This 177-nucleotide RNA was probed chemically with DMS and 2A3.
DMS (dimethyl sulfate) methylates the pairing face of unpaired adenines and cytosines.
The data come from the RNA Mapping Database (RMDB), libraries RFM100 and RFMREP.
The reactions ran in a buffer of 150 mM KOAc, 10 mM MgCl2 and 150 mM bicine (pH 8.5), at 24 C.
[RMDB]
RNA sequence: GGGAACGACUCGAGUAGAGUCGAAAAGUAAAGUCGCCCAUUUUGUCUCUUCUUAACAUUAAUUGGUUUGGCCGCCGACAAGUUAAGAAGCUUCAAUUCUGGCGUUACGCAUAGCUGGCUGUUAGCUUACCUGAACUACGUUCGCGUAGUUCAGGUAAAAAGAAACAACAACAACAAC
Reactivity to DMS in 0.01 (KOAc 150mM, MgCl2 10mM, bicine 150mM(pH8.5), 24C), signal-to-noise 2, nucleotides 027 to 126: g000u030a050a070a060g010u000c020g000c010c000c070a230u000u000u010u000g010u000c020u000c010u000u010c000u010u000a030a030c030a020u050u010a100a240u010u030g000g010u000u010u010g020g000c080c130g000c010c000g020a010c090a030a100g000u000u000a000a000g000a000a020g000c080u030u010c000a000a030u010u010c150u000g000g000c000g030u000u000a050c060g030c160a090u030a090g000c030u000g010g000c110u000g000u010u000a060g020c110u000
Reactivity to 2A3 in 0.01 (KOAc 150mM, MgCl2 10mM, bicine 150mM(pH8.5), 24C), signal-to-noise 4, nucleotides 027 to 126: g070u120a040a040a070g070u070c010g050c000c050c000a030u050u040u010u040g040u010c010u010c000u050u000c000u000u000a010a020c010a170u090u100a100a120u120u090g040g030u070u020u060g070g000c040c000g010c010c000g020a030c020a090a060g000u010u000a010a010g010a000a000g000c010u010u030c000a010a050u040u010c040u090g040g000c030g050u040u060a040c060g030c040a070u070a100g010c000u020g080g000c010u010g080u170u040a010g010c010u000